[RMDB]
RNA sequence: GGGAACGACUCGAGUAGAGUCGAAAACAGCUGAUGAAGAUGAUGAAGGAGUUGAGUCCGGAGGAAAACAUGGGAUUGAACCCCGGAAUCGAGAAAUAAAUUGAAUGAACAGCCAUGCAGAGAGAAGCUAAAAAUGGUACUUCGGUACCAUUUUUAGAAAAGAAACAACAACAACAAC
Reactivity to 2A3 in 0.01 (KOAc 150mM, MgCl2 10mM, bicine 150mM(pH8.5), 24C), signal-to-noise 1, nucleotides 027 to 126: c020a000g030c010u070g040a110u050g020a120a020g030a100u110g000a010u040g010a030a010g060g010a040g040u060u010g070a010g060u000c000c000g070g040a100g110g060a060a050a020a050c010a050u240g070g020g010a050u060u100g090a020a020c000c000c010c000g030g040a000a020u030c030g000a000g060a070a150a030u200a030a050a040u200u090g080a040a060u100g000a030a000c000a010g000c050c000a070u060g040c050a050g010a000g000a000g010a170a000g040
Reactivity to DMS in 0.01 (KOAc 150mM, MgCl2 10mM, bicine 150mM(pH8.5), 24C), signal-to-noise 3, nucleotides 027 to 126: c080a080g030c060u000g030a090u010g020a110a100g010a110u000g010a040u010g000a240a160g020g010a060g030u010u000g010a060g010u010c010c000g000g000a130g000g010a100a090a070a090c060a070u000g000g010g010a100u000u010g000a150a160c050c030c010c030g010g000a110a030u000c030g000a060g000a080a060a070u010a010a060a100u010u020g010a050a060u000g010a080a050c080a060g010c020c040a050u010g030c030a070g000a090g000a090g010a110a090g000